[RMDB]
RNA sequence: GGGAACGACUCGAGUAGAGUCGAAAAGGGGUCCUUUCUUUGAUCGACCACACAGCAUCGAUCUACACUGAAGCCUCCACGGUGUAGGGAGCUGUGGGUCGGGAGAAAGGACGGAGGCACCCAAAUGUGGUAACCCGAUUCGUCGGGUUACCACAAAGCAUAGGAUCAAGUUCGCUUGAUCCUAUGCAAAAGAAACAACAACAACAAC
Reactivity to 2A3 in 0.01 (KOAc 150mM, MgCl2 10mM, bicine 150mM(pH8.5), 24C), signal-to-noise 3, nucleotides 027 to 156: g020g010g080g040u090c030c030u060u050u020c050u300u230u020g010a010u010c000g000a000c040c000a220c010a000c000a250g010c010a010u300c100g000a000u010c000u000a000c000a000c010u020g030a110a010g020c000c000u000c000c010a010c010g000g000u000g000u000a000g000g010g000a010g000c000u000g010u010g000g000g000u010c000g000g020g000a000g000a000a000a000g000g000a000c000g000g010a010g000g000c010a020c000c000c010a030a070a070u140g000u010g000g000u000a000a000c000c000c000g010a020u040u050c190g060u010c000g120g000g000u000u000a000c000c000a010c000a010a010a000